Structure probing data (DMS and 2A3) for a 177-nucleotide construct.
The DMS profile rests on 780 reads.
Reactivities are given for positions 27 through 126.
The 2A3 profile rests on 1,685 reads.
For DMS the reverse transcriptase was MarathonRT.
The data come from the RNA Mapping Database (RMDB), library M2PK90.
2A3 adducts were read by reverse transcription with SuperScript II with manganese.

RNA sequence: GGGAACGACUCGAGUAGAGUCGAAAAAGCGUCGACGAACCUUCCAACCUUGCAAAGCAGCAAAAGCUGAACCUUCCAACCUUCCAAUCUACUCGAGAGGAGGAGGAGGAGGAGGAGGAGGAAUUAAGUAUCAUUACGACUUCGGUCGUAAUGAUACAAAAGAAACAACAACAACAAC
Reactivity to DMS in 0.01 (KOAc 150mM, MgCl2 10mM, bicine 150mM(pH8.5), 24C), signal-to-noise 2, nucleotides 027 to 126: a150g090c070g060u000c050g010a080c050g010a070a180c000c010u050u000c040c020a120a170c100c010u000u000g000c160a080a130a120g000c040a020g000c140a000a040a050a110g000c040u000g000a090a070c010c010u000u000c000c030a080a150c030c010u030u020c000c010a180a100u000c000u000a050c070u000c030g070a010g020a300g020g000a050g010g000a110g000g000a170g150g000a060g040g000a090g000g000a180g010g000a230g020g000a190a090u030u000a030a080
Reactivity to 2A3 in 0.01 (KOAc 150mM, MgCl2 10mM, bicine 150mM(pH8.5), 24C), signal-to-noise 2, nucleotides 027 to 126: a010g010c040g070u030c010g030a160c070g020a060a090c000c000u020u000c010c030a110a130c040c030u030u030g030c040a040a030a040g000c030a030g010c010a040a080a100a110g010c030u040g020a040a020c000c010u020u000c010c040a110a110c020c000u070u040c010c010a040a060u000c000u090a080c010u050c060g050a050g010a020g030g020a040g030g040a040g000g050a060g010g000a030g040g060a020g030g030a030g030g020a030g000g060a040a040u180u080a200a040